The data come from the RNA Mapping Database (RMDB), library TTRINS. This 177-nucleotide RNA was probed chemically with 2A3 and DMS. For DMS, 4,817 sequencing reads were counted. The RNA was probed in 150 mM KOAc, 10 mM MgCl2 and 150 mM bicine (pH 8.5) at 24 C.
RNA sequence: GGGAACGACUCGAGUAGAGUCGAAAAGAUAUGGAUCGGAAUAGAGCGACGAAGCGUCAUAUAUUAUAACAUAUCGGAAACGAUAUGCUAAUAAUAUAUGACGCAGAGCUCUACCGAUCCUAAGUCACCCUAAGUUUAUGUUCGCAUAAACUUAGGGAAAAGAAACAACAACAACAAC
Reactivity to 2A3 in 0.01 (KOAc 150mM, MgCl2 10mM, bicine 150mM(pH8.5), 24C), signal-to-noise 1, nucleotides 027 to 126: g030a000u060a020u210g010g000a000u000c010g000g040a300a300u080a170g010a000g040c010g300a300c090g060a250a020g020c000g010u010c000a000u000a010u000a000u020u010a000u010a040a020c000a000u000a000u000c010g020g020a070a070a040c000g000a000u000a000u020g000c000u060a150a030u010a010a000u010a040u000a000u010g000a000c020g000c000a000g000a000g010c010u000c000u000a000c000c010g000a000u000c000c000u010a020a000g030u040c040a120
Reactivity to DMS in 0.01 (KOAc 150mM, MgCl2 10mM, bicine 150mM(pH8.5), 24C), signal-to-noise 4, nucleotides 027 to 126: g010a060u010a300u020g010g020a010u010c000g000g010a160a150u010a020g010a000g020c000g020a150c260g000a100a150g000c000g010u000c000a020u000a000u000a000u000u000a020u000a060a090c000a000u000a000u000c000g000g000a140a090a240c020g000a010u000a000u000g010c020u000a100a020u000a010a010u000a000u000a000u000g010a000c000g020c000a000g000a120g020c010u000c000u000a030c010c010g000a000u000c000c000u000a000a060g000u000c040a290